[RMDB]
RNA sequence: GGGAACGACUCGAGUAGAGUCGAAAAGAUAUGGAUGAUAGACAUGGCUGAACGUCGGAAACGACGUACAGCCAACAGCUAUAUCCUAAGUCAAACCUACUCCAGUUCUUCGGAACUGGAGUAGGAACAGUAAUAACUCGUUCGCGAGUUAUUACUGAAAAGAAACAACAACAACAAC
Reactivity to 2A3 in 0.01 (KOAc 150mM, MgCl2 10mM, bicine 150mM(pH8.5), 24C), signal-to-noise 5, nucleotides 027 to 126: g020a030u070a040u130g020g000a010u120g080a020u130a010g050a070c060a090u090g000g000c000u000g000a060a010c010g000u010c000g040g000a100a060a020c010g010a000c000g010u020a020c010a000g000c010c000a000a000c020a000g000c000u000a000u000a000u020c000c000u020a150a020g040u020c040a060a010a180c010c000u000a000c000u000c000c000a030g010u010u010c010u040u110c260g160g000a000a000c000u000g010g000a000g000u000a000g000g000a000a000
Reactivity to DMS in 0.01 (KOAc 150mM, MgCl2 10mM, bicine 150mM(pH8.5), 24C), signal-to-noise 6, nucleotides 027 to 126: g000a050u000a280u000g010g010a010u010g010a020u000a010g010a060c090a220u000g000g000c000u000g000a060a000c000g020u010c000g000g000a110a090a230c010g000a010c000g010u000a030c000a010g010c000c000a000a020c220a120g010c000u000a000u000a040u000c000c000u000a060a130g020u000c020a100a080a160c000c000u000a000c000u000c000c000a010g000u000u000c000u000u020c210g020g010a020a010c000u000g000g000a010g000u000a000g010g000a020a040

Source: RMDB library TTRDEL, as collected in RNAgym. This 177-nucleotide RNA was probed chemically with 2A3 and DMS. Conditions: 150 mM KOAc, 10 mM MgCl2 and 150 mM bicine (pH 8.5), 24 C. For 2A3, 20,858 sequencing reads were counted. For DMS the reverse transcriptase was MarathonRT. For DMS, 9,222 sequencing reads were counted. Reactivities are given for positions 27 through 126.